[RMDB]
RNA sequence: GGGAACGACUCGAGUAGAGUCGAAAACCUCACUACGUUUUACUGUUCCUAAAGAAUUUGUGACAGGUACAGUAAAACGUAUUGCAAGGUUUAUCAGUUCCUAUAAACAGGUAAAUAACAAUAUAUGAAAAGCAAAGACUGUUCGCAGUCUUUGCAAGCAGUCUUACUACUUCGGUAGUAAGACUGCAAAAGAAACAACAACAACAAC
Reactivity to 2A3 in 0.01 (KOAc 150mM, MgCl2 10mM, bicine 150mM(pH8.5), 24C), signal-to-noise 3, nucleotides 027 to 156: c000c000u000c000a010c020u000a010c000g000u000u010u010u000a000c000u010g010u040u080c000c020u070a090a210a070g140a220a260u150u230u250g140u150g060a080c100a060g000g000u010a000c000a000g010u000a000a000a000a000c000g000u000a000u020u020g010c040a040a040g010g020u030u000u010a140u100c010a010g020u000u020c000c000u010a080u210a080a150a000c040a010g080g130u100a120a070a100u230a110a070c050a120a050u180a060u070a040u240g050a050a130a040a010g000c010a000a000a000g000a000c000u010g010u020u100c210g010c080a000g000u000c000u000u000u010g000c000a000a000
Structure probing data (2A3) for a 207-nucleotide construct. Reactivities are rounded to 0.1 and cut off at 0 and 3. It was measured as part of the RMDB library M2RFOK.